[RMDB]
RNA sequence: GGGAACGACUCGAGUAGAGUCGAAAAUUAACAUGACACGAGCCCCUAUCUUAUAUCUUAAGAAGGCUUCGAAUCUGGAAGGAACUUCAAUUGGAUAAUAUUUUUGCAUGUCUAUUUUCAUAGGGUCAAUAAUAGGGCGUUUCGACGCCCUAUUAUUAAAAGAAACAACAACAACAAC
Reactivity to DMS in 0.01 (KOAc 150mM, MgCl2 10mM, bicine 150mM(pH8.5), 24C), signal-to-noise 2, nucleotides 027 to 126: u000u020a030a060c030a050u000g000a130c080a090c090g000a120g010c070c000c010c020u000a040u000c050u030u030a060u000a020u030c020u010u010a110a230g000a010a020g000g000c000u000u000c020g000a110a060u060c240u020g000g010a040a040g000g000a090a140c030u000u020c020a040a130u010u010g010g000a050u010a030a090u010a040u010u010u020u030u010g030c020a010u000g010u000c080u020a000u010u000u000u000c050a050u030a060g030g000g010u010c100
Reactivity to 2A3 in 0.01 (KOAc 150mM, MgCl2 10mM, bicine 150mM(pH8.5), 24C), signal-to-noise 2, nucleotides 027 to 126: u090u060a030a000c020a030u080g170a060c060a000c160g030a040g070c000c000c000c040u010a020u000c010u120u030a060u020a040u190c030u060u020a190a030g040a060a040g230g140c000u060u000c010g110a130a200u060c100u190g100g020a010a000g090g040a040a110c000u010u000c010a040a180u080u070g030g060a000u020a080a000u010a240u020u170u040u060u080g040c030a020u020g010u000c040u110a090u090u140u000u000c070a070u000a000g040g000g070u130c020